[RMDB]
RNA sequence: GGGAACGACUCGAGUAGAGUCGAAAAAGACAUCACUUGAUACUUGGUUCAAUCGACUGGAUCAAGUCUUUAGGUAUGGAACCUAAUCCACCUGAUACAUUAAAAAUUGCAUAAAAUGAAAAUGAGACUGAGCGUAGAUGUUCGCAUCUACGCUCAGAAAAGAAACAACAACAACAAC
Reactivity to 2A3 in 0.01 (KOAc 150mM, MgCl2 10mM, bicine 150mM(pH8.5), 24C), signal-to-noise 2, nucleotides 027 to 126: a000g060a000c000a000u010c000a010c060u000u020g000a000u040a110c000u000u030g000g000u020u000c010a040a070u110c240g150a250c260u010g000g000a000u030c000a000a000g000u000c040u050u000u070a000g000g000u020a010u020g000g030a000a010c010c000u010a000a110u000c000c000a020c000c000u090g000a040u060a200c020a010u120u200a090a090a090a050a120u100u150g020c030a020u210a080a190a090a030u200g150a190a140a060a060u230g060a060g000a070